[RMDB]
RNA sequence: GGGAACGACUCGAGUAGAGUCGAAAAGAUAUGGACGAACGACUUCAAUGAUGGUGGGAACAAUGAGAGCUGUGGUCGGAAACGACCACAGCUCUCUAUCCCACUUGAGAAGAGUUCGUCCUAAGUCCUAAGCAAAGAAGUUCGCUUCUUUGCUUAGAAAAGAAACAACAACAACAAC
Reactivity to DMS in 0.01 (KOAc 150mM, MgCl2 10mM, bicine 150mM(pH8.5), 24C), signal-to-noise 2, nucleotides 027 to 126: g010a040u010a120u020g000g010a020c020g010a020a020c010g020a240c000u000u000c000a210a200u020g010a080u010g010g010u000g000g000g030a040a060c270a140a160u010g000a040g020a070g040c010u000g140u000g000g050u010c010g030g010a060a040a110c020g060a030c000c000a000c000a000g030c000u000c030u000c000u000a050u000c000c000c020a000c020u000u000g010a200g000a000a000g000a300g010u000u000c000g030u000c000c010u000a010a110g020u010c010